RNA sequence: GGGAACGACUCGAGUAGAGUCGAAAAUCUCGCAAGUUCGCUUGCGAGAGUAAUAAAUAAAAUGGGAUCAACUCCCCCCCUUUUCCGAGGGUAUCGGAAACCGUACAAACGGCUUCGGCCGUUUGAAGAUAAAAAAGAUGUUCGCAUCUUUUUUAUCAAAAGAAACAACAACAACAAC
Reactivity to DMS in 0.01 (KOAc 150mM, MgCl2 10mM, bicine 150mM(pH8.5), 24C), signal-to-noise 2, nucleotides 027 to 126: u000c000u000c010g010c010a020a000g000u000u020c300g010c000u000u010g000c000g010a020g000a010g000u010a060a130u010a040a090a060u000a060a030a080a100u010g000g000g000a050u010c150a130a180c300u000c000c000c000c000c000c000c000u010u000u000u010c000c000g000a020g000g010g000u010a030u000c000g000g000a020a020a020c300c150g000u000a150c030a000a010a000c000g010g000c000u010u010c250g030g000c000c000g000u000u000u000g010a030a120
Reactivity to 2A3 in 0.01 (KOAc 150mM, MgCl2 10mM, bicine 150mM(pH8.5), 24C), signal-to-noise 1, nucleotides 027 to 126: u000c010u000c010g050c000a000a000g010u040u090c150g030c120u000u000g000c010g000a010g000a000g000u000a000a170u040a060a050a060u220a070a110a000a110u090g000g000g020a030u100c070a090a180c130u030c000c020c000c010c000c010c000u050u100u040u000c000c000g000a010g000g000g030u080a030u010c000g000g040a030a000a000c050c020g110u110a090c000a000a030a010c000g010g000c000u000u060c180g130g010c000c010g000u010u000u000g000a000a020
This 177-nucleotide RNA was probed chemically with DMS and 2A3. Values are in units of 0.01, from 0 to 300, in steps of 10.